Structure probing data (DMS and 2A3) for a 177-nucleotide construct. Values are in units of 0.01, from 0 to 300, in steps of 10. Values cover nucleotides 27 to 126. For 2A3 the reverse transcriptase was SuperScript II with manganese. The 2A3 profile rests on 16,461 reads. DMS adducts were read by reverse transcription with MarathonRT.

RNA sequence: GGGAACGACUCGAGUAGAGUCGAAAAUGCGUAAGGAACGGCUCCCUUGAUGCGCAUCCAGUGCAGCGCGGCGCUCGUGUCGAGGCCGCCGGAGAACGCAAUGCCGACCUUCUGGCCGGCCGGGAGACUCAUGAUUUACUUUCGAGUAAAUCAUGAGAAAAGAAACAACAACAACAAC
Reactivity to DMS in 0.01 (KOAc 150mM, MgCl2 10mM, bicine 150mM(pH8.5), 24C), signal-to-noise 9, nucleotides 027 to 126: u000g010c070g020u000a080a090g010g000a090a080c080g010g000c010u000c090c000c010u000u000g020a110u000g010c010g010c090a190u000c040c030a140g030u010g020c090a090g020c110g010c020g000g010c020g010c070u000c070g010u010g010u010c070g010a040g010g010c020c020g020c000c020g000g010a050g010a100a150c040g000c030a060a100u010g010c010c000g000a040c010c010u000u010c250u010g020g010c020c010g010g010c000c130g000g010g000a060g000a260
Reactivity to 2A3 in 0.01 (KOAc 150mM, MgCl2 10mM, bicine 150mM(pH8.5), 24C), signal-to-noise 8, nucleotides 027 to 126: u090g010c020g030u080a090a110g100g040a110a060c050g050g000c000u010c000c010c000u020u080g100a090u050g000c010g000c030a030u030c020c020a100g080u090g180c080a080g020c070g010c010g120g000c210g120c080u030c020g180u220g140u200c090g010a020g020g010c010c000g000c000c010g020g000a050g020a060a010c020g010c030a040a100u120g010c010c000g020a040c010c000u200u180c100u130g030g000c020c020g000g000c010c020g020g010g000a020g010a010